[RMDB]
Source: RMDB library OK3TST, as collected in RNAgym. An RNA of 207 nucleotides, treated with DMS and 2A3 and read out base by base. The reactions ran in a buffer of 150 mM KOAc, 10 mM MgCl2 and 150 mM bicine (pH 8.5), at 24 C.
RNA sequence: GGGAACGACUCGAGUAGAGUCGAAAACAUGAAGUAAACACGGUACGAUGUACCACAUGAAACGACAGUGAGUCACCACACUGAAAGGUGAUGCGGUCUAACGAAACCUGACCUAAGACGCUCUUUAACAAUCUGGUAAAUAGCUCUUGAGUGCAUGUAAUACAUGAGCCUUCGGGCUCAUGUAUUAAAAAGAAACAACAACAACAAC
Reactivity to DMS in 0.01 (KOAc 150mM, MgCl2 10mM, bicine 150mM(pH8.5), 24C), signal-to-noise 2, nucleotides 027 to 156: c020a110u000g010a160a180g040u000a160a150a170c040a130c110g030g010u000a070c040g010a160u030g010u000a080c010c040a140c040a040u000g000a190a080a090c100g010a120c000a090g060u000g000a150g010u010c000a070c000c030a140c120a240c030u000g010a080a140a180g000g010u000g020a060u000g020c000g000g020u000c010u000a280a100c020g000a080a060a140c060c030u000g010a110c000c040u000a060a060g010a040c130g010c050u000c020u000u010u000a030a020c020a060a110u000c140u030g000g010u000a030a020a030u000a090g010c000u000c020u010u000g000a060g030u000g010c040a060u010g010
Reactivity to 2A3 in 0.01 (KOAc 150mM, MgCl2 10mM, bicine 150mM(pH8.5), 24C), signal-to-noise 2, nucleotides 027 to 156: c030a040u070g040a100a040g090u160a070a120a080c130a020c110g010g000u050a010c050g090a180u240g030u050a040c030c000a020c010a020u090g050a030a000a110c080g070a000c020a000g000u040g090a020g050u020c010a000c040c000a070c000a000c070u160g050a100a050a080g000g000u010g000a020u050g050c040g010g020u010c020u070a040a020c030g100a210a000a000c000c050u030g020a040c000c000u000a060a000g040a010c030g060c060u030c000u060u070u030a090a020c060a010a140u120c090u050g000g020u010a000a020a090u050a050g000c000u000c010u060u060g090a020g010u030g050c040a030u100g030